[RMDB]
Background
Chemical mapping of a 177-nucleotide RNA with 2A3 and DMS. The reactions ran in a buffer of 150 mM KOAc, 10 mM MgCl2 and 150 mM bicine (pH 8.5), at 24 C.

RNA sequence: GGGAACGACUCGAGUAGAGUCGAAAAGAUAUGGAGCUUCAUGAAGUGGCAUCGAUCAGGAAUCGGAAACGAUUCCUGGGAGCCACCAUGAGAGCUCCUAAGUCAAAGUGGGACUUCGGUCCCACAAUCUAAGCUACAAGUUCGCUUGUAGCUUAGAAAAAGAAACAACAACAACAAC
Reactivity to 2A3 in 0.01 (KOAc 150mM, MgCl2 10mM, bicine 150mM(pH8.5), 24C), signal-to-noise 4, nucleotides 027 to 126: g020a010u100a090u220g000g000a000g010c010u010u020c010a020u020g100a300a150g040u020g020g030c040a220u300c190g070a100u070c020a000g000g000a010a000u000c000g000g010a070a010a020c010g000a010u000u000c010c010u020g010g000g000a010g000c000c010a000c010c000a020u010g030a090g080a010g130c000u000c000c000u000a060a010g020u000c050a000a060a210g010u000g000g000g000a000c010u100u130c300g060g000u000c000c000c020a010c000a000a000
Reactivity to DMS in 0.01 (KOAc 150mM, MgCl2 10mM, bicine 150mM(pH8.5), 24C), signal-to-noise 5, nucleotides 027 to 126: g000a050u000a300u000g000g010a000g020c000u000u000c010a010u000g000a200a160g060u010g000g020c000a300u010c180g000a080u020c010a010g000g000a020a000u010c000g000g000a100a070a140c000g010a010u000u000c000c000u000g000g000g010a040g030c010c000a010c030c020a010u000g000a090g010a030g000c000u000c000c000u010a010a080g010u010c050a090a140a170g000u000g000g010g010a030c000u000u010c230g050g000u000c000c000c000a000c000a010a080

The data come from the RNA Mapping Database (RMDB), library TTRDES. The 2A3 profile rests on 9,578 reads.